Description
Source: RMDB library 15KLIB, as collected in RNAgym. Chemical mapping of a 170-nucleotide RNA with DMS and 2A3. For 2A3 the reverse transcriptase was SuperScript II with manganese. Conditions: 150 mM KOAc, 10 mM MgCl2 and 150 mM bicine (pH 8.5), 24 C.
RNA sequence: GGGAACGACUCGAGUAGAGUCGAAAAAUGGAAGGGGGACUCCGGGACACCUUGCAUGCUGGGGACGAAGCCGCCCCCGGGCGCUCCCCUCGAUACGCCUUCGAGGGGGUUCACACCUCCAGUCGGCACAGUGCAACGUUCGCGUUGCACAAAAGAAACAACAACAACAAC
Reactivity to DMS in 0.01 (KOAc 150mM, MgCl2 10mM, bicine 150mM(pH8.5), 24C), signal-to-noise 5, nucleotides 027 to 129: a090u040g000g000a050a030g010g000g000g020g020a040c040u010c000c000g010g030g020a120c020a100c090c040u030u040g070c050a050u000g010c030u020g000g000g000g000a050c060g010a080a070g000c100c040g000c110c030c000c000c080g000g000g000c080g030c140u040c030c010c000c020u010c000g020a050u000a070c210g030c010c070u020u010c030g000a070g060g010g000g010g030u050u030c110a110c240a140c080c010u030c010c070a060g000u010c140g020g000c060a050c210a120
Reactivity to 2A3 in 0.01 (KOAc 150mM, MgCl2 10mM, bicine 150mM(pH8.5), 24C), signal-to-noise 5, nucleotides 027 to 129: a000u160g000g030a010a010g020g000g000g000g010a010c000u000c010c010g000g000g010a020c030a070c030c020u050u110g010c050a060u080g010c000u040g000g010g000g020a030c050g060a080a020g030c040c020g010c000c010c000c000c030g000g000g000c020g010c010u060c000c000c000c000u000c000g020a020u040a080c130g050c060c070u000u010c000g000a120g020g000g010g000g010u050u050c030a030c000a020c030c000u000c000c000a030g060u070c040g000g000c020a020c050a060

DMS adducts were read by reverse transcription with MarathonRT. The DMS profile rests on 20,409 reads. Reactivities are given for positions 27 through 129.